[RMDB]
RNA sequence: GGGAACGACUCGAGUAGAGUCGAAAAGAAUCACCGUACCUAUUUAGGUGUACGCUCCAAGAUCGGUGGAUAGCAGCCCUAUCAAUAUCUAGGAGAACUGUGCUAUGUUUAGAAGAUUAGGUAGUCUAUUACACAGCCAUGUUCGCAUGGCUGUGAACCCAAAUAGACACUUCGGUGUCUAUUUGGGAAAAGAAACAACAACAACAAC
Reactivity to DMS in 0.01 (KOAc 150mM, MgCl2 10mM, bicine 150mM(pH8.5), 24C), signal-to-noise 2, nucleotides 027 to 156: g000a130a060u000c020a120c050c010g040u010a060c010c010u010a150u000u000u020a050g020g040u010g000u000a040c050g010c020u000c010c030a050a050g010a040u000c070g010g020u000g020g030a150u000a080g010c030a200g000c130c110c010u010a040u000c050a070a140u000a120u000c040u000a180g010g000a080g010a030a050c030u010g020u010g030c050u000a060u000g010u000u010u000a080g000a160a070g000a130u010u000a110g000g020u000a080g030u000c050u000a080u010u010a060c000a010c000a010g000c000c000a010u000g010u000u000c290g060c010a000u000g020g030c000u000g020u000g020a000a050
Reactivity to 2A3 in 0.01 (KOAc 150mM, MgCl2 10mM, bicine 150mM(pH8.5), 24C), signal-to-noise 3, nucleotides 027 to 156: g050a020a080u060c010a000c030c020g030u040a020c000c020u060a100u200u200u210a070g000g020u060g030u040a030c020g040c030u000c030c010a040a000g000a040u060c030g050g090u050g110g000a030u050a030g070c080a020g020c000c010c010u040a050u080c060a090a060u070a010u210c030u020a020g020g020a060g020a070a060c050u060g010u030g070c040u030a020u150g100u080u070u060a160g040a230a040g020a110u140u070a040g110g000u010a010g040u030c030u040a130u090u150a120c000a000c000a000g000c000c000a010u010g020u020u010c040g020c080a000u000g000g000c000u010g010u000g000a000a000
Structure probing data (DMS and 2A3) for a 207-nucleotide construct. For DMS, 3,381 sequencing reads were counted. The 2A3 profile rests on 1,913 reads. The RNA was probed in 150 mM KOAc, 10 mM MgCl2 and 150 mM bicine (pH 8.5) at 24 C.